[RMDB]
Conditions: 150 mM KOAc, 10 mM MgCl2 and 150 mM bicine (pH 8.5), 24 C. Structure probing data (DMS and 2A3) for a 207-nucleotide construct. For 2A3, 944 sequencing reads were counted. For 2A3 the reverse transcriptase was SuperScript II with manganese.

RNA sequence: GGGAACGACUCGAGUAGAGUCGAAAAGGCCAGUUCGGUCACGGUAGGGUAUGUGAUAGUUAACAUCAUACCGGUUAUGUAUUGUUUAUCGAAUUUAUUGUCGGUAUCUCGACCUUUCAGUAAUUGCUCACCGAUUAACGGGCUGUGGCGGUGAAGAAUCGACUUCUAAGUUCGCUUAGAAGUCGAUAAAAGAAACAACAACAACAAC
Reactivity to DMS in 0.01 (KOAc 150mM, MgCl2 10mM, bicine 150mM(pH8.5), 24C), signal-to-noise 2, nucleotides 027 to 156: g010g020c000c030a080g020u010u070c050g030g000u000c110a050c050g010g050u000a050g010g000g030u010a040u000g000u010g000a140u010a150g030u010u010a100a100c090a130u010c020a070u000a010c010c020g020g000u000u000a080u000g030u010a070u000u000g020u000u010u000a130u020c060g010a090a120u000u010u000a060u040u000g000u020c030g010g000u000a040u000c060u000c060g000a070c030c010u000u000u020c050a090g000u000a080a100u000u000g030c020u000c020a070c030c000g000a170u000u000a080a090c050g010g020g060c020u010g020u000g020g010c000g000g000u000g010a040a140g020a110
Reactivity to 2A3 in 0.01 (KOAc 150mM, MgCl2 10mM, bicine 150mM(pH8.5), 24C), signal-to-noise 2, nucleotides 027 to 156: g050g010c000c000a020g040u080u130c060g000g000u090c060a020c070g040g090u150a120g030g000g010u080a020u100g080u080g050a010u030a090g130u080u110a110a030c020a030u040c000a020u000a010c030c000g020g030u160u060a060u060g110u050a080u010u170g110u040u090u060a070u070c040g030a070a060u110u060u120a070u110u300g040u010c010g040g000u030a090u040c130u060c010g050a050c020c000u020u240u090c030a020g030u140a110a060u070u040g010c010u000c000a020c000c000g040a060u090u040a070a040c070g010g040g000c010u030g040u060g120g020c090g030g030u010g050a020a020g030a020